[RMDB]
RNA sequence: GGGAACGACUCGAGUAGAGUCGAAAACGAGUUCCUGCCAGAUCCCGAGUUCAUCCAUCUGGAGGGUAGCACACUCUUCCCGGUAGAUGAAGUACACUUCAGGAAUCGGUACCCCUCUGAUGAUCGACGCUAUGGCGCCGAGGAGAAGCGUAACCUGUAUGUACAUCCCAUUCGUGGGAUGUACAUAAAAAGAAACAACAACAACAAC
Reactivity to 2A3 in 0.01 (KOAc 150mM, MgCl2 10mM, bicine 150mM(pH8.5), 24C), signal-to-noise 2, nucleotides 027 to 156: c030g000a040g070u040u010c000c000u020g050c030c040a020g030a190u160c020c000c030g060a020g040u000u010c010a000u060c010c030a000u000c000u020g030g010a000g020g040g010u120a150g110c130a090c010a030c070u080c000u210u150c000c000c000g000g000u020a030g000a020u010g010a030a020g010u120a020c070a020c030u020u030c000a000g030g000a010a050u030c000g080g030u090a070c040c020c000c000u000c010u020g100a090u080g000a020u050c030g010a020c020g010c030u130a100u180g210g030c010g000c000c000g010a010g030g010a040g020a050a020g080c040g060u040a070a070c020c050u100g020
Reactivity to DMS in 0.01 (KOAc 150mM, MgCl2 10mM, bicine 150mM(pH8.5), 24C), signal-to-noise 1, nucleotides 027 to 156: c000g010a210g000u000u000c000c020u010g010c170c060a210g010a070u000c000c030c000g010a240g020u010u010c050a030u000c020c020a050u000c010u000g000g000a100g020g000g010u000a090g030c150a210c140a080c020u000c050u000u000c010c010c040g050g060u000a000g000a030u000g030a050a090g130u000a140c090a080c030u000u000c070a090g010g030a050a040u000c040g030g010u020a080c050c000c010c060u000c020u000g000a120u000g020a120u000c010g020a040c020g000c010u010a140u020g050g000c010g060c020c000g020a110g030g000a070g030a100a090g000c030g000u000a080a120c050c010u000g000
Structure probing data (2A3 and DMS) for a 207-nucleotide construct. Source: RMDB library OK3TST, as collected in RNAgym. The RNA was probed in 150 mM KOAc, 10 mM MgCl2 and 150 mM bicine (pH 8.5) at 24 C. For 2A3, 1,217 sequencing reads were counted. For 2A3 the reverse transcriptase was SuperScript II with manganese. 2A3 is a SHAPE reagent: it acylates the 2'-hydroxyl of flexible nucleotides of all four kinds. For DMS, 2,418 sequencing reads were counted.